[RMDB]
RNA sequence: GGGAACGACUCGAGUAGAGUCGAAAAGAUAUGGACGCAAACAGGACAUGCACCUCCUCGGAAACGAGGAGAGUGCAACAGCCUGCUAGCGUCCUAAGUCAAAGCGCAUGGGUUCGCCCAUGCGCAACUGACGAUCAUCCUUCGGGAUGAUCGUCAGAAAAGAAACAACAACAACAAC
Reactivity to DMS in 0.01 (KOAc 150mM, MgCl2 10mM, bicine 150mM(pH8.5), 24C), signal-to-noise 1, nucleotides 027 to 126: g000a040u000a300u000g020g000a020c070g000c000a020a140a110c000a000g000g000a000c200a230u000g000c010a000c000c000u000c040c010u000c000g010g000a150a020a140c010g020a020g000g000a000g000a000g000u000g010c000a000a020c300a220g040c000c000u000g040c000u000a300g000c000g000u000c000c000u000a000a040g000u000c050a160a160a200g000c010g000c000a020u000g000g000g010u000u020c300g000c000c000c000a000u000g000c020g050c000a000a050
Source information: The record gives the reactivity of an RNA of 177 nucleotides to DMS. The data come from the RNA Mapping Database (RMDB), library TTRDES. Conditions: 150 mM KOAc, 10 mM MgCl2 and 150 mM bicine (pH 8.5), 24 C.